Structure probing data (2A3) for a 177-nucleotide construct.
It was measured as part of the RMDB library RFM100.
The RNA was probed in 150 mM KOAc, 10 mM MgCl2 and 150 mM bicine (pH 8.5) at 24 C.
2A3 adducts were read by reverse transcription with SuperScript II with manganese.
For 2A3, 401 sequencing reads were counted.

RNA sequence: GGGAACGACUCGAGUAGAGUCGAAAAGAAAGAAAGAAAAACGGGGCAAUCCGAGGUGCACGUGGCUUGCGCCCGCUCGCGGGACUCUGUGCCGUGGUGCGACCUUCUGGUAGCGCCGGAGAGCCAACGGGUGCUACCUCUUCGGAGGUAGCACCCGAAAAGAAACAACAACAACAAC
Reactivity to 2A3 in 0.01 (KOAc 150mM, MgCl2 10mM, bicine 150mM(pH8.5), 24C), signal-to-noise 1, nucleotides 027 to 126: g060a010a270a000g060a050a240a000g130a000a030a010a000a000c070g000g010g030g000c080a100a190u080c000c020g000a000g000g000u060g000c020a000c000g000u000g000g000c000u000u140g030c070g050c070c030c020g000c000u030c020g010c050g030g000g000a010c130u100c080u160g030u130g100c060c020g090u110g080g220u000g000c120g050a240c000c000u070u070c090u170g000g030u080a050g000c000g000c020c020g040g000a070g000a000g070c020c060a000a000